[RMDB]
RNA sequence: GGGAACGACUCGAGUAGAGUCGAAAAACCGGCUAGGAGCCGCAGGGCGUUCUCCGGGGCGCGGCCCGAGACCGUCGCGUCGUAGACAGCCAGGAGACCCGGGAGCAGAUUCACCGCAGCGGCCGUCACUCUUUCUACUUUUCGAAGUAGAAAGAGUAAAAGAAACAACAACAACAAC
Reactivity to 2A3 in 0.01 (KOAc 150mM, MgCl2 10mM, bicine 150mM(pH8.5), 24C), signal-to-noise 6, nucleotides 027 to 126: a000c010c000g020g010c060u100a070g040g090a040g020c000c000g010c020a020g010g040g010c030g050u090u020c100u020c000c010g010g030g020g000c030g000c030g000g000c010c070c040g050a070g010a080c060c040g090u100c040g020c040g100u010c010g010u030a040g010a110c050a020g050c020c010a050g030g090a090g040a070c010c000c000g010g010g000a050g020c050a030g040a130u130u110c070a050c100c030g010c050a030g000c000g000g010c000c010g060u080c020
Reactivity to DMS in 0.01 (KOAc 150mM, MgCl2 10mM, bicine 150mM(pH8.5), 24C), signal-to-noise 5, nucleotides 027 to 126: a150c030c020g000g000c110u010a120g000g000a150g030c060c000g060c030a160g010g000g010c050g000u000u000c010u020c000c000g020g010g000g010c020g010c070g000g040c040c050c080g000a070g010a100c020c030g000u030c150g010c120g010u010c010g000u010a060g010a050c300a150g000c010c000a090g000g000a130g010a080c060c020c020g000g000g010a060g000c140a100g010a190u030u020c080a080c040c020g000c120a100g000c010g010g000c010c020g010u020c060
This 177-nucleotide RNA was probed chemically with 2A3 and DMS. DMS adducts were read by reverse transcription with MarathonRT. The RNA was probed in 150 mM KOAc, 10 mM MgCl2 and 150 mM bicine (pH 8.5) at 24 C.